An RNA of 177 nucleotides, treated with 2A3 and DMS and read out base by base. For 2A3 the reverse transcriptase was SuperScript II with manganese. Conditions: 150 mM KOAc, 10 mM MgCl2 and 150 mM bicine (pH 8.5), 24 C. In probing experiments dimethyl sulfate is read out at A N1 and C N3, which are open when not base-paired. The DMS profile rests on 5,016 reads.
RNA sequence: GGGAACGACUCGAGUAGAGUCGAAAAGAUAUGGAUGUCACCGAGCGUCCAGUGCGACGAAGUCGGAAACGACAGAGCACUGGAACGCGGCGUGACAUCCUAAGUCAAACGGACGUUCGCGUCCGAAGGUGUUACUUAUCUUCGGAUAAGUAACACCAAAAGAAACAACAACAACAAC
Reactivity to 2A3 in 0.01 (KOAc 150mM, MgCl2 10mM, bicine 150mM(pH8.5), 24C), signal-to-noise 5, nucleotides 027 to 126: g030a030u070a030u160g000g000a000u010g000u020c010a000c010c070g040a070g030c010g020u000c000c000a020g010u000g000c110g120a300c050g040a300a020g010u010c010g000g040a080a070a050c010g010a000c010a010g050a010g010c010a000c010u000g020g010a030a050c010g000c010g000g040c170g000u000g000a000c000a010u000c000c000u000a010a000g020u010c030a070a060a050c010g000g010a000c000g020u040u110c300g010c020g130u010c010c000g020a040a070
Reactivity to DMS in 0.01 (KOAc 150mM, MgCl2 10mM, bicine 150mM(pH8.5), 24C), signal-to-noise 5, nucleotides 027 to 126: g000a030u000a300u010g000g020a010u000g020u000c000a020c020c020g010a300g010c010g000u000c000c000a010g010u000g010c000g010a140c220g010a090a090g010u000c000g000g000a080a070a230c000g010a010c000a030g010a200g000c000a010c000u000g010g000a020a010c010g010c000g010g010c280g020u000g000a000c000a000u000c000c000u000a010a110g010u000c030a080a090a230c030g010g010a010c010g010u000u020c180g020c020g010u000c000c000g000a030a030